This 207-nucleotide RNA was probed chemically with 2A3.
For 2A3 the reverse transcriptase was SuperScript II with manganese.
The reactions ran in a buffer of 150 mM KOAc, 10 mM MgCl2 and 150 mM bicine (pH 8.5), at 24 C.
RNA sequence: GGGAACGACUCGAGUAGAGUCGAAAAGCGUACUACAUUUGUAAACCAGCUGACAUGCUUAAAAAUGAUUCUCCCAAAUAGGAGAAUCGCCAAUAAGCAACAGCAGCUGGGAAGAAGAAUGUAUCGCAAAAGCUAUCGAUCUUCGGAUCGAUAGCAAGAAAACAAUUGCCUUCGGGCAAUUGUUUUCAAAAGAAACAACAACAACAAC
Reactivity to 2A3 in 0.01 (KOAc 150mM, MgCl2 10mM, bicine 150mM(pH8.5), 24C), signal-to-noise 1, nucleotides 027 to 156: g000c000g070u080a130c040u010a010c010a020u010u000u040g000u000a010a000a000c000c000a000g010c000u020g070a080c020a090u040g000c000u010u020a020a010a010a000a000u020g000a000u000u000c000u070c020c040c030a170a290a210u300a140g000g000a010g000a020a010u010c000g000c000c000a020a020u030a010a000g010c000a070a050c030a080g060c010a000g000c000u000g010g010g000a110a050g000a000a010g000a010a000u020g000u040a020u300c010g000c010a050a090a000a000g000c000u000a000u000c000g000a010u010c010u050u100c280g160g000a000u000c000g000a000u000a000g020c000a000a010